[RMDB]
RNA sequence: GGGAACGACUCGAGUAGAGUCGAAAACUUCAGCGAUAAGCUGCGGAUCGAACUCCUCGAUAUCCAUCGUGCGGGUGAUAACGUCGAGGAUGUCCGCCCGCAUGCCGCGGUCGGGCUUAGGGAAGUUGAUGAUCUCGUCGAAGCGCCGCCAGGCGGCGGAUCGUUCGAGUUUCGACUCGAACGAUCCAAAAGAAACAACAACAACAAC
Reactivity to 2A3 in 0.01 (KOAc 150mM, MgCl2 10mM, bicine 150mM(pH8.5), 24C), signal-to-noise 1, nucleotides 027 to 156: c000u030u010c010a010g000c010g170a150u050a300a050g010c020u020g020c030g000g000a030u040c020g020a010a020c010u000c010c000u000c000g000a000u030a000u110c060c050a040u090c110g070u110g230c150g010g040g000u060g030a150u090a170a060c070g010u000c050g030a010g030g020a020u030g020u000c010c000g030c040c000c000g070c010a060u210g050c020c050g020c020g010g050u110c020g020g010g010c000u080u200a150g050g000g020a070a040g010u170u080g130a100u100g000a040u090c030u000c060g140u040c040g030a110a030g020c120g080c040c000g040c030c020a170g000g090c050g010g000c040
Structure probing data (2A3) for a 207-nucleotide construct. It was measured as part of the RMDB library OK3TST. Conditions: 150 mM KOAc, 10 mM MgCl2 and 150 mM bicine (pH 8.5), 24 C.